[RMDB]
RNA sequence: GGGAACGACUCGAGUAGAGUCGAAAAAAGGAGCUCUGAAGCGCGAGGAGUAAGAGCAUAGCGAUAGGGGGAGAUGCUAGGAGUUAGGGGAGACCGAAGCGAGGAGGAAAGCAAAGAAAGCAACGGGCCUAUAACUCUGGUUCGCCAGAGUUAUAGGAAAAGAAACAACAACAACAAC
Reactivity to DMS in 0.01 (KOAc 150mM, MgCl2 10mM, bicine 150mM(pH8.5), 24C), signal-to-noise 1, nucleotides 027 to 126: a120a050g010g000a050g000c010u010c030u020g010a200a170g040c060g010c130g000a150g000g000a090g010u010a060a020g030a050g000c040a120u000a030g000c080g050a060u000a130g050g000g000g000g010a080g010a040u000g010c060u010a020g000g010a030g000u000u000a120g040g030g000g020a140g010a070c100c040g000a050a060g010c100g010a070g020g010a040g010g010a050a050a100g010c100a030a050a060g000a040a060a080g010c110a060a060c080g000g000g020